[RMDB]
RNA sequence: GGGAACGACUCGAGUAGAGUCGAAAAAAAUGCGAACUUUGAAGACUGAAGUGGAGAAAGGUUCCGUGUGAUCAGUAAUUGGACACGGGUGAGUCGAUCCUAAGAGAUAGGAUAAUUCCGUUUGAAAUUACAAUCAGAAAUUCGUUUCUGAUUGUAAAAAAGAAACAACAACAACAAC
Reactivity to 2A3 in 0.01 (KOAc 150mM, MgCl2 10mM, bicine 150mM(pH8.5), 24C), signal-to-noise 6, nucleotides 027 to 126: a000a000a000u200g020c030g020a050a030c060u120u090u120g070a110a030g040a040c040u040g040a050a030g090u090g080g070a090g070a080a040a040g080g000u090u020c000c020g000u020g010u030g060a090u040c020a020g140u160a240a070u180u110g010g000a010c000a000c000g010g020g020u060g010a000g000u000c020g020a020u010c010c000u030a070a030g070a010g010a090u070a080g040g020a040u090a080a080u190u030c020c050g030u070u070u100g050a040a040a000
Reactivity to DMS in 0.01 (KOAc 150mM, MgCl2 10mM, bicine 150mM(pH8.5), 24C), signal-to-noise 8, nucleotides 027 to 126: a050a060a050u020g010c060g010a060a040c050u000u000u010g000a140a140g000a060c050u010g010a080a090g030u010g010g000a090g010a080a090a090g010g010u010u020c010c000g010u010g000u000g010a100u030c040a070g010u040a070a090u030u010g010g000a040c020a010c020g000g000g010u030g000a030g010u000c010g010a200u000c010c000u000a040a080g010a110g010a100u020a070g000g010a050u010a060a100u010u020c020c020g000u010u010u010g010a080a070a100